[RMDB]
RNA sequence: GGGAACGACUCGAGUAGAGUCGAAAAGGAGGGUGAAAGCCCUUGAUACUGUAGUGGAAAUUAUAAAUAAGAAGAGUUCUGAGUUGCUUAAGCAGAACUAAAAUAAAAAGACAAGCAUUAUUACAAACAUGGCGAGGUAAGUUCGCUUACCUCGCAACCCACUAAGCUAGUUCGCUAGCUUAGUGGGAAAAGAAACAACAACAACAAC
Reactivity to 2A3 in 0.01 (KOAc 150mM, MgCl2 10mM, bicine 150mM(pH8.5), 24C), signal-to-noise 2, nucleotides 027 to 156: g050g000a000g020g000g000u030g030a090a000a030g000c000c020c000u010u040g040a030u020a100c050u040g060u110a030g050u050g030g040a040a030a010u170u130a090u230a170a110a030u140a050a080g080a050a030g060a010g050u000u000c000u000g040a020g060u090u070g040c010u060u030a090a000g010c010a010g000a000a030c060u060a000a000a020a010u110a010a100a010a020a000g040a010c030a010a040g000c000a000u000u050a020u160u150a150c060a030a120a000c020a060u130g120g010c000g000a000g010g000u000a000a000g000u000u030c080g000c030u000u000a000c000c000u020c000g000c000a000a000

Source: RMDB library M2RFPK, as collected in RNAgym.
Chemical mapping of a 207-nucleotide RNA with 2A3.
Values cover nucleotides 27 to 156.
The 2A3 profile rests on 1,166 reads.